[RMDB]
RNA sequence: GGGAACGACUCGAGUAGAGUCGAAAAUGACCCGGAUCUUUCCAACGUAGCGUCGCGGUGCCGCGAGGAACGUGUGUGCAGCGGCGACUAUCGGCGCCGCCAGUCUGUUGGGACUGUUGGCUGGUCACUUUUAUACUGCUUUCGAGCAGUAUAAAAGAAAAGAAACAACAACAACAAC
Reactivity to 2A3 in 0.01 (KOAc 150mM, MgCl2 10mM, bicine 150mM(pH8.5), 24C), signal-to-noise 4, nucleotides 027 to 126: u080g050a030c000c030c000g010g040a070u020c050u090u100u020c030c010a040a030c060g040u030a030g020c010g030u020c010g010c020g000g050u020g000c020c000g020c030g020a120g080g140a250a110c010g000u030g010u010g000u040g030c030a030g010c010g030g000c010g070a040c010u010a020u130c030g050g020c070g030c010c000g000c000c000a010g010u020c010u080g270u300u280g150g010g010a000c010u020g000u100u020g000g040c020u020g010g020u000c000a010
Reactivity to DMS in 0.01 (KOAc 150mM, MgCl2 10mM, bicine 150mM(pH8.5), 24C), signal-to-noise 7, nucleotides 027 to 126: u010g000a120c010c000c120g000g010a080u000c050u000u000u000c020c020a160a130c060g010u010a040g010c010g010u000c030g010c020g010g040u000g010c010c010g010c030g010a260g010g010a100a100c020g020u000g010u020g040u000g010c040a080g010c000g010g010c010g000a070c010u000a030u010c040g020g000c170g010c020c020g010c120c020a030g000u000c020u000g010u000u010g010g010g000a020c040u000g000u000u000g000g000c080u000g000g000u000c050a190
Structure probing data (2A3 and DMS) for a 177-nucleotide construct. Reactivities are given for positions 27 through 126. It was measured as part of the RMDB library OK2TST.